An RNA of 177 nucleotides, treated with 2A3 and DMS and read out base by base. Conditions: 150 mM KOAc, 10 mM MgCl2 and 150 mM bicine (pH 8.5), 24 C. For DMS the reverse transcriptase was MarathonRT.
[RMDB]
RNA sequence: GGGAACGACUCGAGUAGAGUCGAAAAGAUAUGGAACGACCCAGGCUCAAGGUGCGAAGAACUCGGAAACGAGGGAGCACCGAAGGCCUGCGUUCCUAAGUCAAACUCGGCGCUUCGGCGCCGAGAACAUGAGAUAUAAGUUCGCUUAUAUCUCAUGAAAAGAAACAACAACAACAAC
Reactivity to 2A3 in 0.01 (KOAc 150mM, MgCl2 10mM, bicine 150mM(pH8.5), 24C), signal-to-noise 6, nucleotides 027 to 126: g010a010u070a040u130g000g010a000a020c010g120a090c050c160c070a010g010g000c010u020c090a100a040g000g000u010g000c010g160a300a040g020a110a060c000u010c000g020g010a060a050a030c000g000a000g010g000g020a020g000c000a000c010c000g000a010a000g010g000c000c000u000g000c000g000u000u000c000c000u030a140a010g060u040c040a050a020a130c010u000c000g000g010c000g000c010u060u100c300g110g000c000g000c030c000g000a000g000a000a000
Reactivity to DMS in 0.01 (KOAc 150mM, MgCl2 10mM, bicine 150mM(pH8.5), 24C), signal-to-noise 9, nucleotides 027 to 126: g000a050u010a300u010g010g010a020a010c010g000a210c210c280c030a020g010g010c010u000c020a040a300g000g010u000g010c000g010a100a140g000a140a190c010u000c010g000g000a110a060a180c010g010a020g000g000g000a080g010c000a010c000c000g000a130a120g000g000c000c000u000g000c020g020u000u000c000c000u000a040a070g010u000c050a110a110a220c010u000c000g000g010c000g020c000u000u010c190g020g010c000g000c000c000g000a000g010a030a120